[RMDB]
RNA sequence: GGGAACGACUCGAGUAGAGUCGAAAAGGUCGGAGCUUCGGCUCCGACCAAAGCAGGAUUACCAAAUCCCAGCAAGCAGCAGCAGCAAGCAUGCAGCAAGCAAAACCAUUACGUUCGCGUAAUGGAAUCAUUACAUUGCGUUCGCGCAAUGUAAUGAAAAAGAAACAACAACAACAAC
Reactivity to DMS in 0.01 (KOAc 150mM, MgCl2 10mM, bicine 150mM(pH8.5), 24C), signal-to-noise 2, nucleotides 027 to 126: g010g060u000c000g010g000a010g010c010u000u000c190g030g000c000u000c000c000g000a000c000c000a040a010a060g050c050a100g000g010a060u010u000a100c090c060a090a090a100u000c010c010c040a110g000c040a080a170g010c050a030g000c000a060g000c020a090g030c040a070a070g000c100a060u000g030c070a090g000c040a110a120g000c090a070a070a140a170c010c020a020u000u000a000c000g010u000u010c240g020c030g000u000a000a010u010g000g010a060a070
Reactivity to 2A3 in 0.01 (KOAc 150mM, MgCl2 10mM, bicine 150mM(pH8.5), 24C), signal-to-noise 1, nucleotides 027 to 126: g020g020u010c000g000g000a030g000c050u140u170c300g100g030c010u040c000c000g010a000c000c000a000a000a000g000c020a000g060g000a030u010u080a110c040c010a010a040a040u030c010c010c000a010g010c030a060a030g030c020a020g000c030a000g000c000a000g020c030a070a030g040c010a020u060g000c000a000g000c020a070a000g050c000a000a010a020a140c020c000a010u000u000a000c010g040u040u020c300g010c010g070u000a000a000u010g000g000a010a030

Conditions: 150 mM KOAc, 10 mM MgCl2 and 150 mM bicine (pH 8.5), 24 C. An RNA of 177 nucleotides, treated with DMS and 2A3 and read out base by base. For DMS the reverse transcriptase was MarathonRT. For DMS, 1,308 sequencing reads were counted.